Chemical mapping of a 177-nucleotide RNA with 2A3 and DMS. The 2A3 profile rests on 5,027 reads. Values cover nucleotides 27 to 126. 2A3 adducts were read by reverse transcription with SuperScript II with manganese.
[RMDB]
RNA sequence: GGGAACGACUCGAGUAGAGUCGAAAAAUAGCCAUGGGCAACACGCUAAGCUUCCUGCGAAUCUUCGCACUAGCCCUAGCACACAGCUCGCUAAUGUACGGAUUCUAUGCUAUCUCGCUGCUCGCUGACGCAGUGUAAUGUUCGCAUUACACUGCGUAAAAGAAACAACAACAACAAC
Reactivity to 2A3 in 0.01 (KOAc 150mM, MgCl2 10mM, bicine 150mM(pH8.5), 24C), signal-to-noise 3, nucleotides 027 to 126: a000u090a010g030c020c020a070u120g000g000g000c030a070a020c030a020c080g000c040u030a030a000g000c010u020u030c010c020u040g000c040g030a030a070u030c050u100u060c060g000c020a010c050u020a010g010c030c000c030u040a010g010c010a010c010a000c020a060g010c010u040c040g000c030u030a050a070u080g010u080a040c030g030g020a030u050u020c040u060a070u140g020c010u040a040u100c040u010c030g040c020u030g020c010u020c050g060c080u080g030
Reactivity to DMS in 0.01 (KOAc 150mM, MgCl2 10mM, bicine 150mM(pH8.5), 24C), signal-to-noise 5, nucleotides 027 to 126: a070u000a080g010c040c150a080u000g010g040g010c030a050a070c300a070c150g010c040u000a040a130g010c070u000u000c050c050u000g000c090g010a040a090u000c120u000u000c100g020c020a030c060u000a170g010c010c070c080u000a050g010c020a060c130a080c190a130g000c050u010c200g000c050u010a040a060u010g010u010a120c170g000g000a070u000u000c050u010a060u000g000c040u000a040u000c070u000c020g000c050u010g000c030u000c070g020c090u010g000